[RMDB]
RNA sequence: GGGAACGACUCGAGUAGAGUCGAAAAGUACUGAGGUUCGCCUCAGUACAAAAGCAGAUCUGAGCCUGCCAGCUCUCUGCCUAACUAGGGAACGCAAUAAAAAAACGUGCAUGUUCGCAUGCACGAACGUGUUACAUAACUUCGGUUAUGUAACACGAAAAGAAACAACAACAACAAC
Reactivity to 2A3 in 0.01 (KOAc 150mM, MgCl2 10mM, bicine 150mM(pH8.5), 24C), signal-to-noise 6, nucleotides 027 to 126: g010u000a000c000u000g000a000g030g030u040u100c190g140c010c000u000c000a010g000u000a000c000a000a020a000a000g000c000a000g010a060u130c050u140g010a000g020c010c050u100g070c060c020a000g000c000u000c000u000c010u010g000c000c010u070a100a050c030u050a070g070g010g050a090a030c060g040c160a100a130u260a230a140a020a010a010a010a030c010g010u000g000c000a010u000g030u030u060c240g000c070a000u000g000c010a000c000g000a010a000
Reactivity to DMS in 0.01 (KOAc 150mM, MgCl2 10mM, bicine 150mM(pH8.5), 24C), signal-to-noise 5, nucleotides 027 to 126: g010u000a000c000u010g020a010g000g030u000u010c280g020c000c000u000c000a000g010u000a010c000a030a060a120a120g010c010a010g010a050u000c140u010g010a060g020c030c010u000g010c190c140a130g000c010u000c010u000c010u000g000c010c060u000a070a110c110u010a040g000g020g000a090a050c100g010c140a090a080u030a020a000a080a070a070a070a150c010g030u000g020c000a010u000g010u000u000c170g020c000a000u000g000c000a000c010g000a010a050
Source information:
Structure probing data (2A3 and DMS) for a 177-nucleotide construct. 2A3 adducts were read by reverse transcription with SuperScript II with manganese. The DMS profile rests on 5,001 reads. For DMS the reverse transcriptase was MarathonRT. The reactions ran in a buffer of 150 mM KOAc, 10 mM MgCl2 and 150 mM bicine (pH 8.5), at 24 C. For 2A3, 12,744 sequencing reads were counted.